[RMDB]
Chemical mapping of a 177-nucleotide RNA with 2A3 and DMS. The 2A3 profile rests on 708 reads. It was measured as part of the RMDB library OK2TRN. The reactions ran in a buffer of 150 mM KOAc, 10 mM MgCl2 and 150 mM bicine (pH 8.5), at 24 C. Values are in units of 0.01, from 0 to 300, in steps of 10.

RNA sequence: GGGAACGACUCGAGUAGAGUCGAAAAAGGAGCUGACUCAACUAUGUGAGAGCACAAUUGCGGUUCAUCACGCUGAUGGGAUAACCCCCUUGAAUCCUCAUGAAUUUUGGAGGUGUCCUGCAGGAGAGACUUGACGGAACUUCGGUUCCGUCAAGUCAAAAGAAACAACAACAACAAC
Reactivity to 2A3 in 0.01 (KOAc 150mM, MgCl2 10mM, bicine 150mM(pH8.5), 24C), signal-to-noise 1, nucleotides 027 to 126: a000g090g000a050g040c020u050g060a040c030u070c050a030a050c050u150a020u290g000u010g050a010g020a020g140c020a000c020a190a300u120u150g120c190g000g000u060u030c010a110u030c030a140c050g050c020u110g070a160u080g000g000g040a010u030a110a030c000c020c000c000c120u000u000g080a090a040u020c000c050u060c050a020u090g110a120a130u120u050u110u140g070g000a090g000g000u010g040u000c000c000u000g000c000a020g090g040a060g000a000
Reactivity to DMS in 0.01 (KOAc 150mM, MgCl2 10mM, bicine 150mM(pH8.5), 24C), signal-to-noise 1, nucleotides 027 to 126: a040g000g000a060g000c080u010g010a180c050u000c090a130a060c050u030a060u000g080u010g000a050g020a110g020c010a090c060a120a180u000u020g030c060g020g010u000u000c010a050u000c060a090c060g020c080u000g000a120u000g000g000g010a060u000a020a150c000c060c030c030c000u010u000g050a050a020u000c020c030u040c140a130u000g000a010a120u020u010u010u000g020g020a080g000g020u000g000u000c010c030u000g020c050a050g000g000a130g020a130